[RMDB]
RNA sequence: GGGAACGACUCGAGUAGAGUCGAAAACGGCAAAAAAGCAAACUUGACCACCAAGGAUAAAAGAGAUCAUAUCCAAGGAUGCAAAAGAUAAUCUCACUUUUGACACCCACUGAUCUCGAACUUAAAGAAAACCGAGACUACUUCGGUAGUCUCGGAAUCGAUCUAUACUGUUCGCAGUAUAGAUCGAAAAAGAAACAACAACAACAAC
Reactivity to DMS in 0.01 (KOAc 150mM, MgCl2 10mM, bicine 150mM(pH8.5), 24C), signal-to-noise 2, nucleotides 027 to 156: c050g000g010c030a000a070a030a060a050a100g040c050a080a090a110c060u000u010g000a260c060c050a100c040c040a060a170g020g000a120u000a060a080a100a170g000a060g010a010u000c040a110u000a140u000c130c050a060a180g030g010a020u000g000c010a000a030a030a060g000a060u000a100a130u010c090u000c140a100c010u000u010u010u040g010a130c040a010c010c000c000a120c210u000g020a020u000c000u000c000g010a060a070c130u010u000a070a030a140g000a090a050a070a110c000c000g010a040g020a020c000u000a020c000u000u000c300g020g000u010a000g010u000c000u000c000g010g010a020a010
Reactivity to 2A3 in 0.01 (KOAc 150mM, MgCl2 10mM, bicine 150mM(pH8.5), 24C), signal-to-noise 6, nucleotides 027 to 156: c020g050g000c050a060a010a000a030a070a060g100c070a110a090a060c060u080u060g050a120c000c020a030c020c020a080a030g050g010a070u090a190a150a030a010g010a000g000a000u000c010a020u040a040u130c080c060a070a050g020g010a060u030g000c000a010a010a010a000g020a070u140a170a190u150c090u050c110a050c020u040u000u020u000g090a100c000a030c010c000c010a030c060u020g000a010u010c000u000c000g000a030a020c030u110u150a100a040a050g090a030a080a050a010c000c000g000a000g000a000c000u010a000c000u020u070c180g050g000u000a000g000u000c000u010c000g000g000a000a000
Structure probing data (DMS and 2A3) for a 207-nucleotide construct. DMS adducts were read by reverse transcription with MarathonRT. The DMS profile rests on 4,237 reads. Reactivities are given for positions 27 through 156. Conditions: 150 mM KOAc, 10 mM MgCl2 and 150 mM bicine (pH 8.5), 24 C.